[RMDB]
RNA sequence: GGGAACGACUCGAGUAGAGUCGAAAACGCUGGGAUCGAUGGUAGUGGAGCGACCACUGAAGCGCGCACGGUGGUUCGCUAUGAAGCGAGAGUAGAUCCUGUGCUGAAGCGCGCACGGCAACCGAAAGGUGCGGGAAGACCGACUUCGGUCGGUCAAUCACUCAACAGGGUUCGCCCUGUUGAGUGAAAAAGAAACAACAACAACAAC
Reactivity to 2A3 in 0.01 (KOAc 150mM, MgCl2 10mM, bicine 150mM(pH8.5), 24C), signal-to-noise 1, nucleotides 027 to 156: c050g000c040u100g000g000g050a030u020c020g020a030u100g140g040u000a020g040u040g030g010a020g000c000g000a020c010c000a000c020u050g010a200a030g010c020g000c020g000c000a020c010g000g030u000g010g000u290u300c000g000c020u140a300u120g010a000a000g000c010g030a040g000a000g090u060a020g000a000u000c000c000u000g000u010g000c080u080g010a060a060g030c010g000c000g000c020a000c010g020g010c010a050a070c040c000g030a060a000a040g010g010u050g020c040g000g000g100a110a070g020a000c000c000g010a020c050u010u080c220g080g010u020c010g000g000u000c000a000a010
An RNA of 207 nucleotides, treated with 2A3 and read out base by base. The 2A3 profile rests on 918 reads. The reactions ran in a buffer of 150 mM KOAc, 10 mM MgCl2 and 150 mM bicine (pH 8.5), at 24 C. Values are in units of 0.01, from 0 to 300, in steps of 10.